[RMDB]
RNA sequence: GGGAACGACUCGAGUAGAGUCGAAAAGUCACUCAAUUCGUUGAGUGACAUACUGGGCCCGGAGUCGCGCAUGAAAGGGUCAACACGCGCUCGAUAAAAUAACUAGUUGCCAGUUCGCUGGCAACAACCUUGUGGGUAUGUUCGCAUACCCACAAGGAAAAGAAACAACAACAACAAC
Reactivity to DMS in 0.01 (KOAc 150mM, MgCl2 10mM, bicine 150mM(pH8.5), 24C), signal-to-noise 1, nucleotides 027 to 126: g000u010c000a000c010u000c010a020a000u000u040c190g000u000u000g010a000g020u010g010a010c000a040u010a020c080u000g000g000g000c040c010c060g010g010a040g030u000c040g020c030g040c040a060u020g010a110a170a090g000g000g000u000c020a050a110c070a040c010g000c030g000c010u000c020g000a160u010a050a040a040a040u010a020a110c100u010a190g000u000u000g040c000c000a020g000u030u030c300g040c000u000g000g020c000a000a000c010a060a030
Reactivity to 2A3 in 0.01 (KOAc 150mM, MgCl2 10mM, bicine 150mM(pH8.5), 24C), signal-to-noise 2, nucleotides 027 to 126: g000u010c010a000c010u000c000a050a010u080u110c230g060u210u000g010a000g010u000g000a000c000a000u000a000c000u070g010g090g030c000c010c000g000g000a000g050u190c030g010c010g020c080a100u090g110a130a070a080g180g020g030u030c030a030a030c010a010c020g000c010g000c000u000c000g110a130u150a140a180a060a070u190a090a040c080u070a060g020u000u000g000c010c000a000g000u000u050c210g050c120u000g010g000c030a000a000c000a010a000
An RNA of 177 nucleotides, treated with DMS and 2A3 and read out base by base. High 2A3 reactivity points to a flexible backbone, as in loops and unpaired stretches. The DMS profile rests on 818 reads. Values cover nucleotides 27 to 126. It was measured as part of the RMDB library M2PK50.